An RNA of 177 nucleotides, treated with 2A3 and read out base by base. Values cover nucleotides 27 to 126.

[RMDB]
RNA sequence: GGGAACGACUCGAGUAGAGUCGAAAAAGUUGCUCAUCUCACCAAGUCCACUGACUCUCGAUUUUCGGAGGCCUUUCCCUUAAUUGGAGAUGGUUUUGAUGGACACACACCUGAUGACAUCAUAAUCGCGCUGGGAGUUAUUCGUAACUCCCAGCGCAAAAGAAACAACAACAACAAC
Reactivity to 2A3 in 0.01 (KOAc 150mM, MgCl2 10mM, bicine 150mM(pH8.5), 24C), signal-to-noise 1, nucleotides 027 to 126: a060g020u020u080g000c000u000c000a060u000c020u010c000a140c000c020a060a000g000u020c000c000a060c000u000g020a120c000u000c000u000c040g060a070u000u000u250u000c080g110g040a000g000g020c000c030u200u180u040c040c020c000u020u140a300a140u160u160g300g010a000g060a080u030g030g030u000u000u000u070g120a150u030g000g050a020c000a000c000a000c000a050c040c100u070g010a090u050g020a040c000a000u030c000a020u140a080a040u200c100